[RMDB]
RNA sequence: GGGAACGACUCGAGUAGAGUCGAAAACGAAUACAGAACAGAUGCGCCAGACGCAGGGCCGGCUUCGAGGGCGCGGCGGACGGCAGCGCGGCUCCGGACCCGGCCGUCCCCCGGGUCCCCGAGGCCAUGCUGAGUGCAUUUUCGAAUGCACUCAGCAAAAAGAAACAACAACAACAAC
Reactivity to 2A3 in 0.01 (KOAc 150mM, MgCl2 10mM, bicine 150mM(pH8.5), 24C), signal-to-noise 2, nucleotides 027 to 126: c030g040a060a010u290a130c100a110g220a130a010c030a040g060a090u130g030c060g090c110c030a030g170a190c010g020c010a040g030g010g030c050c080g010g020c000u000u000c000g000a020g020g050g000c300g000c040g150g020c010g010g000a000c000g020g000c020a140g070c050g140c290g060g000c030u050c060c040g100g070a200c000c000c000g030g000c000c000g000u000c050c000c000c000c000g100g000g000u030c000c010c000c030g000a000g010g030c000c000a000
Reactivity to DMS in 0.01 (KOAc 150mM, MgCl2 10mM, bicine 150mM(pH8.5), 24C), signal-to-noise 1, nucleotides 027 to 126: c090g030a070a090u000a220c090a080g000a140a120c110a250g000a020u000g000c000g020c000c160a090g040a070c080g010c090a110g030g020g020c140c130g000g000c030u000u020c000g000a010g000g000g000c010g000c090g040g000c300g000g010a030c000g000g000c000a000g000c000g000c270g050g000c040u000c200c060g050g090a300c000c000c000g030g000c000c000g010u000c000c000c230c000c010g020g000g070u000c030c000c090c020g000a020g000g000c000c000a030
About this RNA:
Source: RMDB library OK1LIB, as collected in RNAgym. The record gives the reactivity of an RNA of 177 nucleotides to 2A3 and DMS. For DMS, 1,118 sequencing reads were counted. Reactivities are rounded to 0.1 and cut off at 0 and 3. In probing experiments dimethyl sulfate is read out at A N1 and C N3, which are open when not base-paired. The RNA was probed in 150 mM KOAc, 10 mM MgCl2 and 150 mM bicine (pH 8.5) at 24 C.